RNA sequence: GGGAACGACUCGAGUAGAGUCGAAAAGGUGGCGCUGCAGACUGAGCCCCACUUGCUGGCUGGCACCGUCAACCCCACCGUGGGCAAGAGGAAUGUCACGCUGCCCAUCGACAACGGCCUCAACCUGGUGGAGUGGCGCCAGCGCAAAGAGCAGGCACAUCAUCGGAGGGUUCGCCCUCCGAUGAUGAAAAGAAACAACAACAACAAC
Reactivity to 2A3 in 0.01 (KOAc 150mM, MgCl2 10mM, bicine 150mM(pH8.5), 24C), signal-to-noise 1, nucleotides 027 to 156: g080g040u040g030g090c050g000c220u110g040c060a040g050a300c050u040g020a020g040c000c000c000c030a020c010u000u010g000c010u030g170g030c020u060g010g000c010a090c100c120g120u120c050a080a050c020c000c000c000a030c030c010g050u200g000g000g000c170a160a100g030a000g000g080a080a050u060g020u060c020a000c180g260c140u230g030c000c000c000a030u110c050g000a020c010a050a050c120g260g010c010c000u000c000a010a020c000c020u010g000g000u000g000g000a010g030u120g010g000c000g000c020c000a030g000c000g030c010a080a080a030g070a000g020c000a040g000g090c010a020